[RMDB]
RNA sequence: GGGAACGACUCGAGUAGAGUCGAAAAUCAAGCCACCGUCUUUUCUGUAAACAGGUUCUCUUGUGCAAAUCGCGUUUCAUGGACAGACGGUGUCUUGCCCUGAUGUCCGGUUUUUUCCGUCAGCGCAGUAGAUACGUUUGUUCGCAAACGUAUCUACAAAAGAAACAACAACAACAAC
Reactivity to 2A3 in 0.01 (KOAc 150mM, MgCl2 10mM, bicine 150mM(pH8.5), 24C), signal-to-noise 8, nucleotides 027 to 126: u120c000a000a000g000c010c000a000c000c000g000u000c000u020u040u010u020c010u040g170u240a000a010a010c000a030g020g000u060u010c110u030c010u210u240g120u150g180c090a030a040a020u030c030g020c100g090u000u010u010c080a090u160g000g010a000c000a010g000a000c000g000g000u000g000u000c000u000u000g010c000c000c010u040g060a070u070g030u050c030c000g030g040u080u030u020u020u100u050c020c010g020u050c040a040g060c050g000c080a020
Reactivity to DMS in 0.01 (KOAc 150mM, MgCl2 10mM, bicine 150mM(pH8.5), 24C), signal-to-noise 4, nucleotides 027 to 126: u030c010a010a010g000c050c000a010c020c000g000u000c010u000u000u000u000c000u000g000u060a010a020a010c010a130g000g000u000u000c100u020c180u010u010g020u020g020c180a120a020a020u000c020g010c150g000u000u010u000c070a030u000g010g000a010c250a020g010a020c000g010g000u000g000u000c000u000u000g010c060c010c000u010g000a050u000g010u010c090c030g010g010u000u000u000u000u010u000c010c010g000u010c080a070g000c110g000c150a150